[RMDB]
RNA sequence: GGGAACGACUCGAGUAGAGUCGAAAACAACAGUUACAGCAUGUGCAACAGGUACAAACUCAAUCGGAGAAGCAUUUAAAAUUGUGCAACGCGGUGAUGCAGAUGCAAUGAUUACUGGUGGUACGGAUGACGCGCAGUCAUUCGUGACUGCGCGUCAAAAAGAAACAACAACAACAAC
Reactivity to 2A3 in 0.01 (KOAc 150mM, MgCl2 10mM, bicine 150mM(pH8.5), 24C), signal-to-noise 1, nucleotides 027 to 126: c000a000a020c000a020g000u100u070a010c000a010g000c000a000u050g000u000g130c000a050a030c000a030g030g060u300a080c080a000a220a030c000u000c070a000a180u250c120g090g000a020g000a230a000g030c000a000u000u090u300a220a300a100a100u140u140g000u000g080c000a000a200c000g000c000g160g120u000g000a000u000g100c000a000g000a230u000g000c070a100a000u110g300a160u000u100a050c020u020g000g000u030g030g000u060a000c100g020g080a080